[RMDB]
Structure probing data (2A3 and DMS) for a 177-nucleotide construct. The RNA was probed in 150 mM KOAc, 10 mM MgCl2 and 150 mM bicine (pH 8.5) at 24 C. Reactivities are given for positions 27 through 126. The data come from the RNA Mapping Database (RMDB), library RFMREP. 2A3 adducts were read by reverse transcription with SuperScript II with manganese.
RNA sequence: GGGAACGACUCGAGUAGAGUCGAAAAUUAUUUUAUUCUUAUGAGCUUGUGGGCUCCAUCUACCAACCUCUGGGCAAAUGCUCAUCUGACUUCCAUAGACACACAGCAAGCAGACAACCACACAAAGGACUAGUAAUAUCUUCGGAUAUUACUAGUCAAAAGAAACAACAACAACAAC
Reactivity to 2A3 in 0.01 (KOAc 150mM, MgCl2 10mM, bicine 150mM(pH8.5), 24C), signal-to-noise 2, nucleotides 027 to 126: u050u010a050u020u190u030u070a190u120u040c010u010u220a080u190g020a010g030c010u070u070g050u110g090g030g060c010u000c010c030a070u000c010u070a070c000c020a020a050c020c030u010c050u090g020g020g000c030a150a120a050u190g010c000u020c040a070u020c030u020g050a060c010u070u020c050c000a010u020a070g080a020c020a000c000a000c010a040g050c030a020a040g000c000a000g000a050c020a050a050c010c000a030c000a000c030a080a070a020g130
Reactivity to DMS in 0.01 (KOAc 150mM, MgCl2 10mM, bicine 150mM(pH8.5), 24C), signal-to-noise 3, nucleotides 027 to 126: u000u020a090u010u020u010u010a100u020u000c010u000u010a060u000g010a060g010c050u010u000g020u010g020g000g020c030u000c030c070a040u010c060u010a100c050c050a070a110c100c040u000c050u010g010g010g010c060a060a110a090u010g010c010u000c040a030u000c060u010g000a100c080u010u000c030c040a060u000a070g000a090c050a020c070a040c110a070g010c050a060a060g020c040a080g000a070c060a030a050c030c050a040c150a060c100a050a120a080g000